[RMDB]
RNA sequence: GGGAACGACUCGAGUAGAGUCGAAAAGCACAGCAGAGUCUGGGAAUCGGGGGUCCUGAGUGUGCUCCUGUCUGCAGCCUCCUGUGUACCACUGGGCAAGUUCUUCCCCUCUAGGGGCACCUGAUUCCUAUCUUUACAUAUUCGUAUGUAAAGAUAGAAAAGAAACAACAACAACAAC
Reactivity to 2A3 in 0.01 (KOAc 150mM, MgCl2 10mM, bicine 150mM(pH8.5), 24C), signal-to-noise 9, nucleotides 027 to 126: g020c010a010c010a010g050c050a040g020a010g080u030c020u050g030g000g080a040a080u260c060g020g000g000g000g010u030c010c010u110g120a120g120u200g010u050g020c010u020c000c000u030g020u020c020u110g110c010a010g010c000c000u020c000c010u020g000u010g020u050a050c010c010a040c070u080g020g030g000c110a130a090g020u080u040c020u050u040c010c010c010c010u050c070u100a100g030g000g000g000c020a030c000c010u070g030a140u080u060c000
Reactivity to DMS in 0.01 (KOAc 150mM, MgCl2 10mM, bicine 150mM(pH8.5), 24C), signal-to-noise 9, nucleotides 027 to 126: g010c020a030c030a050g020c130a110g010a070g010u000c050u010g010g000g000a040a040u010c050g010g010g000g010g020u000c060c020u000g000a110g020u010g020u000g010c010u000c020c030u000g010u000c030u000g020c040a060g000c070c020u000c040c020u000g010u000g000u000a140c050c030a080c090u000g010g000g010c050a060a080g000u000u000c060u000u000c030c010c010c050u000c110u010a150g020g000g000g010c110a010c020c030u000g000a110u000u000c040